Source information
The record gives the reactivity of an RNA of 207 nucleotides to 2A3 and DMS. For DMS, 4,605 sequencing reads were counted. It was measured as part of the RMDB library RNAMAK. The reactions ran in a buffer of 150 mM KOAc, 10 mM MgCl2 and 150 mM bicine (pH 8.5), at 24 C.

RNA sequence: GGGAACGACUCGAGUAGAGUCGAAAAGGGGUCAACCACGGUAAUUCGAGGCGUAAAGCAACAGCGUACUGAAGCCUCCACGGUACGACAUGCUUUACCCUCGUGCCAGUGGUUGACGGAGGCACCCAAAACGUGUAACUGUUCGCAGUUACACGAAGCUAAUAGACUGGUUCGCCAGUCUAUUAGCAAAAGAAACAACAACAACAAC
Reactivity to 2A3 in 0.01 (KOAc 150mM, MgCl2 10mM, bicine 150mM(pH8.5), 24C), signal-to-noise 8, nucleotides 027 to 156: g050g000g020g010u000c000a000a000c000c000a000c010g000g030u180a290a300u300u210c010g000a010g010g000c160g040u000a010a000a010g000c050a030a150c060a160g030c000g000u010a000c000u030g060a130a050g010c000c000u000c010c000a010c000g000g000u000a000c010g120a080c070a130u230g000c000u000u000u010a010c000c000c000u000c000g000u030g010c000c020a080g000u000g000g000u000u000g000a000c000g000g010a000g000g000c010a050c010c000c000a020a080a020a040c020g000u000g010u000a000a000c000u010g030u060u090c300g010c130a010g000u000u000a000c000a000c000g010a040a010
Reactivity to DMS in 0.01 (KOAc 150mM, MgCl2 10mM, bicine 150mM(pH8.5), 24C), signal-to-noise 2, nucleotides 027 to 156: g000g030g030g030u000c010a020a010c000c000a030c020g000g030u000a090a180u000u000c010g020a040g030g000c290g000u000a000a050a040g060c000a120a140c060a180g020c020g000u000a040c010u000g000a080a120g000c020c020u000c010c030a300c030g000g020u000a000c000g000a110c050a250u010g030c010u000u000u000a040c020c000c000u000c000g050u000g020c000c000a120g020u010g020g000u010u000g010a000c030g010g020a040g060g070c010a140c010c000c000a080a070a120a190c000g020u010g000u000a010a020c000u010g020u000u010c280g050c020a020g010u000u000a000c000a020c010g010a020a100